[RMDB]
RNA sequence: GGGAACGACUCGAGUAGAGUCGAAAACGACGAAGACAAUAAAAACAACACGUAACGACUCCAGCACAACAAAAACAAAAUCGCGGAGGCGCAGCUAACUGAUUCUUUUGGAGAGGAGUUGCUGUCGACGAAAUGAAAUCUUCGGAUUUCAUUUCGUAAAAGAAACAACAACAACAAC
Reactivity to DMS in 0.01 (KOAc 150mM, MgCl2 10mM, bicine 150mM(pH8.5), 24C), signal-to-noise 3, nucleotides 027 to 126: c060g000a150c070g000a070a050g020a040c090a070a100u050a040a090a110a090a070c130a130a120c110a070c100g020u010a080a160c100g000a100c030u010c010c040a030g040c060a080c150a060a030c130a030a080a010a130a070c130a050a040a130a080u040c090g000c050g030g000a040g000g020c040g010c060a050g000c040u010a090a060c060u000g000a130u020u000c010u000u010u030u030g010g000a060g020a100g000g010a100g010u010u010g000c010u010g010u010c050g000
Reactivity to 2A3 in 0.01 (KOAc 150mM, MgCl2 10mM, bicine 150mM(pH8.5), 24C), signal-to-noise 7, nucleotides 027 to 126: c040g130a010c050g050a040a050g090a030c080a100a110u280a130a120a060a020a000c060a050a020c030a010c120g090u110a090a020c050g040a040c020u010c020c010a060g050c050a010c040a140a100c050a070a060a000a070a010c080a060a160a010a060u140c100g000c030g030g030a020g010g010c030g010c010a010g000c020u040a000a050c010u030g040a180u070u030c030u050u180u110u140g100g080a040g000a000g050g000a020g010u010u010g000c020u020g020u050c050g020